[RMDB]
RNA sequence: GGGAACGACUCGAGUAGAGUCGAAAAGGAAGGUAUAGCGCGAGUAAAUCUAAGUUCUCCGGAACACCAUCCACGUGUGCAGUUAAAAAAAGAAGCUUCUGAAAGUUUUGUGCCGCCGUGUAAUAUAUUGCGAGAUCAUGAAGGCGAGGAGGGAGAACAAGGUUGUAUGAUUCGUCAUACAACCUUGAAAAGAAACAACAACAACAAC
Reactivity to 2A3 in 0.01 (KOAc 150mM, MgCl2 10mM, bicine 150mM(pH8.5), 24C), signal-to-noise 2, nucleotides 027 to 156: g050g000a010a000g050g020u120a130u080a120g050c020g010c020g030a020g030u060a020a120a140u090c090u100a110a070g040u140u020c040u000c010c030g020g060a120a060c050a020c030c000a060u020c040c010a030c030g060u110g000u020g020c090a050g040u130u180a110a140a020a000a000a000a010g050a100a020g070c030u170u060c150u300g240a160a150a100g050u030u080u130u110g050u060g000c010c030g000c020c040g030u030g030u010a060a070u120a020u040a030u160u090g070c040g020a070g000a060u040c020a030u110g100a040a010g060g000c060g000a000g000g020a000g020g000g000a090g040a010a020
Reactivity to DMS in 0.01 (KOAc 150mM, MgCl2 10mM, bicine 150mM(pH8.5), 24C), signal-to-noise 1, nucleotides 027 to 156: g000g050a110a080g000g000u000a100u020a070g000c030g000c050g030a150g020u010a030a070a090u020c020u000a080a250g010u000u000c030u020c080c020g030g000a110a110c030a050c030c020a170u000c030c080a090c050g000u000g000u020g020c020a070g050u020u020a000a000a090a150a110a080a300g020a090a090g020c030u000u000c060u000g050a050a100a120g000u010u000u010u000g020u000g060c090c020g070c040c000g000u010g000u000a060a080u000a140u000a040u000u010g000c080g000a120g010a110u000c000a120u010g010a050a080g020g020c020g010a050g030g020a090g010g030g010a050g000a080a130

Source: RMDB library OK3TST, as collected in RNAgym. Chemical mapping of a 207-nucleotide RNA with 2A3 and DMS. For 2A3 the reverse transcriptase was SuperScript II with manganese. The reactions ran in a buffer of 150 mM KOAc, 10 mM MgCl2 and 150 mM bicine (pH 8.5), at 24 C. For 2A3, 659 sequencing reads were counted. For DMS the reverse transcriptase was MarathonRT.